[RMDB]
The record gives the reactivity of an RNA of 177 nucleotides to DMS and 2A3. Source: RMDB library TTRDEL, as collected in RNAgym. The reactions ran in a buffer of 150 mM KOAc, 10 mM MgCl2 and 150 mM bicine (pH 8.5), at 24 C. 2A3 is a SHAPE reagent: it acylates the 2'-hydroxyl of flexible nucleotides of all four kinds.
RNA sequence: GGGAACGACUCGAGUAGAGUCGAAAAGAUAUGGAUUGUAAACGUUGAUCCUACCCACCAAGUUCGGAAACGAACUUGAGGGGGAGUUUGACAAUCCUAAGUCAAAAGCGCAACUUCGGUUGCGCAAGAUGGAUGUUUAGUUCGCUAAACAUCCAUCAAAAGAAACAACAACAACAAC
Reactivity to DMS in 0.01 (KOAc 150mM, MgCl2 10mM, bicine 150mM(pH8.5), 24C), signal-to-noise 4, nucleotides 027 to 126: g010a030u000a040u020g000g000a010u000u000g010u000a010a010a010c010g020u010u000g010a130u010c190c090u010a130c010c000c000a110c020c000a000a010g000u000u000c000g040g000a020a010a050c000g010a000a000c010u000u000g000a080g010g000g010g010g000a030g000u000u000u000g010a030c000a020a010u000c000c000u000a020a100g000u000c000a060a070a130a130g000c010g020c010a000a010c000u000u020c210g020g010u000u000g000c000g030c000a000a020
Reactivity to 2A3 in 0.01 (KOAc 150mM, MgCl2 10mM, bicine 150mM(pH8.5), 24C), signal-to-noise 4, nucleotides 027 to 126: g000a000u030a000u040g000g000a000u010u010g000u030a000a020a010c050g040u050u170g090a230u160c030c060u100a070c000c000c010a020c000c010a010a000g000u000u000c000g010g000a020a020a000c010g000a000a000c000u000u000g010a070g030g000g000g000g060a040g010u010u010u050g180a030c000a000a000u010c010c000u010a010a000g020u010c020a000a030a140a100g000c010g000c000a000a010c020u070u120c300g160g000u010u010g000c000g000c010a010a010